[RMDB]
RNA sequence: GGGAACGACUCGAGUAGAGUCGAAAAUCGGCGUGGCGGGCGGCGUCGGGGUCGUCGCCCCCCGCUGGGGAGGCGGGCGCGGCGGACAGCCGCCCCAGGGCGGCGAGGAUCCCCGCGGCGCCGUACCACAGACAAACACUUUCGAGUGUUUGUCUGUAAAAGAAACAACAACAACAAC
Reactivity to DMS in 0.01 (KOAc 150mM, MgCl2 10mM, bicine 150mM(pH8.5), 24C), signal-to-noise 1, nucleotides 027 to 126: u020c050g010g010c020g050u020g020g030c130g040g010g030c000g060g000c000g050u000c200g030g020g000g010u000c000g010u000c000g000c000c010c020c010c000c000g000c030u020g010g000g030g010a120g010g010c020g000g000g000c080g010c010g030g010c110g020g000a050c040a140g000c010c010g010c000c010c010c110a050g000g000g020c070g060g000c020g000a080g010g000a260u010c020c040c020c000g000c000g020g000c000g000c000c000g000u020a070c030c010
Reactivity to 2A3 in 0.01 (KOAc 150mM, MgCl2 10mM, bicine 150mM(pH8.5), 24C), signal-to-noise 2, nucleotides 027 to 126: u090c030g000g000c020g050u190g080g030c220g070g020g000c030g010g000c000g030u080c110g000g000g060g070u080c010g010u000c000g030c020c000c000c000c010c000g000c020u010g020g010g030g020a030g000g030c070g000g010g120c010g010c000g010g020c120g020g010a020c020a000g040c000c000g000c000c000c000c000a050g050g040g010c000g000g000c020g030a090g110g010a160u030c020c000c000c000g000c000g000g020c000g000c000c000g000u030a000c000c000